This 177-nucleotide RNA was probed chemically with DMS.
RNA sequence: GGGAACGACUCGAGUAGAGUCGAAAAGUUGACCAGGGACGGCGCUUCGGCGCUACGUUGUACGGAAGACAGAAGACCGACCGGCGAAUGCUUCCUCAGUUCGCCGCUCUCGAAGUCGCAGCAGCAGCCGUGAUUCGCUAUUCGUAGCGAAUCACGGAAAAGAAACAACAACAACAAC
Reactivity to DMS in 0.01 (KOAc 150mM, MgCl2 10mM, bicine 150mM(pH8.5), 24C), signal-to-noise 1, nucleotides 027 to 126: g080u010u000g000a300c000c020a060g000g000g000a040c150g000g010c030g000c020u000u040c150g000g020c000g000c050u000a010c110g000u010u000g000u000a170c150g000g000a060a300g000a000c000a010g000a220a060g000a070c210c030g000a110c160c000g020g060c000g000a000a000u000g000c160u040u000c070c090u000c220a240g000u000u000c000g000c000c000g000c300u000c000u000c060g000a050a200g000u000c010g000c010a010g020c010a080g010c000a060g110